[RMDB]
The data come from the RNA Mapping Database (RMDB), library TTRDEL. Chemical mapping of a 177-nucleotide RNA with DMS and 2A3.
RNA sequence: GGGAACGACUCGAGUAGAGUCGAAAAGAUAUGGACAUAGCAAUGAUGUGACUGGAUCGGAAACGAUCUUCAUUGAGCUAGUCCUAAGUCAAAGUUGAUUGCGGAUCUUCGGAUCCGCAAUCAACAAGAACGUAUGAAACUUCGGUUUCAUACGUUCAAAAGAAACAACAACAACAAC
Reactivity to DMS in 0.01 (KOAc 150mM, MgCl2 10mM, bicine 150mM(pH8.5), 24C), signal-to-noise 4, nucleotides 027 to 126: g010a050u010a300u010g000g010a020c010a110u000a010g010c010a190a120u010g000a070u000g010u010g010a050c300u010g000g000a000u010c000g010g000a090a110a220c010g010a000u000c000u000u000c010a010u000u000g000a110g030c000u000a020g010u000c010c010u000a040a090g010u000c030a080a090a070g010u000u010g000a010u000u000g000c000g010g010a020u000c000u000u000c270g020g000a000u000c000c000g000c000a010a000u000c000a010a000c000a110a100
Reactivity to 2A3 in 0.01 (KOAc 150mM, MgCl2 10mM, bicine 150mM(pH8.5), 24C), signal-to-noise 3, nucleotides 027 to 126: g040a000u080a020u150g000g000a020c160a290u040a010g000c010a040a300u200g000a030u070g090u070g080a110c180u250g080g000a000u000c000g030g000a040a070a080c020g010a000u020c000u050u000c000a000u010u090g040a000g000c000u010a010g000u020c010c000u030a120a010g030u020c040a140a030a090g010u010u010g020a000u000u010g000c000g020g030a020u040c010u040u170c300g030g020a010u020c020c030g010c000a000a000u000c000a000a000c000a000a000
2A3 adducts were read by reverse transcription with SuperScript II with manganese. Values cover nucleotides 27 to 126. The RNA was probed in 150 mM KOAc, 10 mM MgCl2 and 150 mM bicine (pH 8.5) at 24 C.